RNA sequence: GGGAACGACUCGAGUAGAGUCGAAAAAACACGUGGGUACGGCCCAGUGGGGGGGAGAGGGACACGCCCUGGGCUCUGCGCAGGGUGCAGCCGGACUGACUGAGCCCCUGUGCCGCCCCCAGAUAAACGUAUGUUUAGUCUUCGGACUAAACAUACGAAAAGAAACAACAACAACAAC
Reactivity to DMS in 0.01 (KOAc 150mM, MgCl2 10mM, bicine 150mM(pH8.5), 24C), signal-to-noise 3, nucleotides 027 to 126: a070a050c050a080c070g020u000g000g010g010u010a090c110g010g020c000c010c020a100g020u010g030g010g010g000g010g000g010a160g000a090g010g000g020a070c090a300c090g020c010c020c000u000g000g000g000c040u020c120u030g000c010g000c010a020g000g000g010u010g020c000a010g000c010c030g020g010a180c120u010g000a040c050u000g010a200g000c020c010c000c050u010g010u010g000c030c060g000c060c040c000c000c020a040g000a080u000a070a030a160
Reactivity to 2A3 in 0.01 (KOAc 150mM, MgCl2 10mM, bicine 150mM(pH8.5), 24C), signal-to-noise 2, nucleotides 027 to 126: a010a000c080a020c060g080u080g030g000g020u120a040c070g050g010c000c060c000a020g070u150g000g020g010g000g050g010g010a080g030a040g020g000g000a020c040a010c090g050c000c010c010u020g000g050g020c070u070c090u280g000c170g000c000a000g000g000g000u080g010c000a000g050c020c000g040g080a060c070u100g010a060c020u000g010a030g080c010c000c060c000u020g030u070g010c020c020g090c020c000c000c000c000a020g010a090u200a010a140a010

Chemical mapping of a 177-nucleotide RNA with DMS and 2A3. 2A3 adducts were read by reverse transcription with SuperScript II with manganese. It was measured as part of the RMDB library M2PK90. Values cover nucleotides 27 to 126. For 2A3, 2,072 sequencing reads were counted.